[RMDB]
RNA sequence: GGGAACGACUCGAGUAGAGUCGAAAAGAUAUGGAACGUUGCAGAGUGUGGCUUUUGACGCUUCUGUGAUGGAUCGGAAACGAUCUAUGGAGCGAUAAGCCACACUCUGCACCGUUCCUAAGUCGCAUCGUAUCUGUAUCUUCGGAUACAGAUACGAAAAAGAAACAACAACAACAAC
Reactivity to DMS in 0.01 (KOAc 150mM, MgCl2 10mM, bicine 150mM(pH8.5), 24C), signal-to-noise 3, nucleotides 027 to 126: g010a050u010a300u000g000g010a010a020c000g010u010u000g030c000a020g000a030g000u000g020u000g000g020c000u010u000u000u000g040a240c140g000c000u010u000c000u020g010u020g030a170u020g000g010a010u000c010g010g000a190a120a240c000g010a010u000c000u000a100u000g010g000a010g010c010g000a140u010a030a010g010c000c000a000c000a010c010u000c000u000g010c000a010c030c010g000u000u010c000c000u000a010a090g010u010c040g010c270a180